[RMDB]
RNA sequence: GGGAACGACUCGAGUAGAGUCGAAAAGAACAAUGUGAUGUCUCUACCGGCUAUUGGAAUGUUUUUAAUUGCUGAGCCAAUGACGUAACCUUCCGCCACUGGGAUGACGUGGGUGACACCAUCACCAAUGUAUUCAACGCUUCGGCGUUGAAUACAUAAAAGAAACAACAACAACAAC
Reactivity to 2A3 in 0.01 (KOAc 150mM, MgCl2 10mM, bicine 150mM(pH8.5), 24C), signal-to-noise 1, nucleotides 027 to 126: g070a020a040c110a070a120u190g020u190g140a080u100g000u020c020u050c020u050a190c040c010g030g030c020u110a120u110u130g000g080a080a080u020g080u060u110u010u120u260a090a070u110u050g000c020u060g050a030g080c060c000a000a000u050g040a020c090g050u050a080a050c050c020u150u000c020c040g000c040c000a050c030u040g120g000g000a060u030g030a000c020g010u090g020g040g020u010g000a000c010a000c070c040a020u040c000a010c020c040a050
Reactivity to DMS in 0.01 (KOAc 150mM, MgCl2 10mM, bicine 150mM(pH8.5), 24C), signal-to-noise 1, nucleotides 027 to 126: g020a220a090c090a050a030u030g020u030g000a090u000g000u000c030u010c000u010a140c090c050g000g020c070u000a060u000u000g000g030a070a090u000g000u010u000u000u010u000a040a090u000u010g030c020u020g020a110g020c080c030a000a000u000g020a060c210g010u000a020a040c030c000u000u000c070c030g030c030c020a050c030u010g010g020g010a050u000g020a080c110g000u000g000g010g010u000g000a060c060a110c080c050a070u000c050a040c030c060a090
An RNA of 177 nucleotides, treated with 2A3 and DMS and read out base by base. DMS adducts were read by reverse transcription with MarathonRT.